This 207-nucleotide RNA was probed chemically with 2A3 and DMS. The RNA was probed in 150 mM KOAc, 10 mM MgCl2 and 150 mM bicine (pH 8.5) at 24 C. The DMS profile rests on 1,835 reads.

RNA sequence: GGGAACGACUCGAGUAGAGUCGAAAACCUACUCAAUACGUCCUCGUCGUACAGAACGGUAACAUGUAUUCCGAACAUCCGCGCUUGGGUAUACGAGUAUACACCUUACCCAACCCUCGCCAACGGGAGUGCAUCCACGAGUUCGCUCGUGGAUGAAGCCUGGUAUAAUCUUCGGAUUAUACCAGGCAAAAGAAACAACAACAACAAC
Reactivity to 2A3 in 0.01 (KOAc 150mM, MgCl2 10mM, bicine 150mM(pH8.5), 24C), signal-to-noise 3, nucleotides 027 to 156: c010c000u040a050c040u060c030a060a050u040a160c020g080u060c000c040u030c050g070u030c040g030u080a100c040a100g110a140a020c030g010g010u070a100a030c050a100u140g050u090a040u040u110c010c010g010a100a040c040a090u020c030c030g050c030g000c070u050u090g000g010g010u020a030u050a100c110g020a010g060u010a010u030a060c100a080c010c050u020u060a040c000c010c030a070a040c030c000c000u040c050g060c040c010a060a040c050g030g000g000a050g040u090g050c000a000u000c000c000a000c000g000a010g010u060u060c130g020c100u010c000g000u000g000g000a000u000g010a000a000
Reactivity to DMS in 0.01 (KOAc 150mM, MgCl2 10mM, bicine 150mM(pH8.5), 24C), signal-to-noise 1, nucleotides 027 to 156: c000c000u030a060c040u000c070a050a140u000a060c040g010u000c010c010u000c080g000u010c120g010u010a160c060a070g020a170a170c020g000g000u000a100a120c150a060u000g030u010a040u010u010c010c020g070a150a120c040a150u000c000c000g120c080g020c110u010u000g000g030g050u000a070u000a130c020g020a130g040u010a100u000a070c130a080c040c040u000u000a070c000c000c070a110a070c050c050c010u000c100g080c040c040a070a070c070g010g030g010a060g010u010g010c000a010u000c010c000a010c000g030a010g010u000u010c280g050c050u000c020g000u000g000g040a000u000g010a030a120
For 2A3, 1,913 sequencing reads were counted.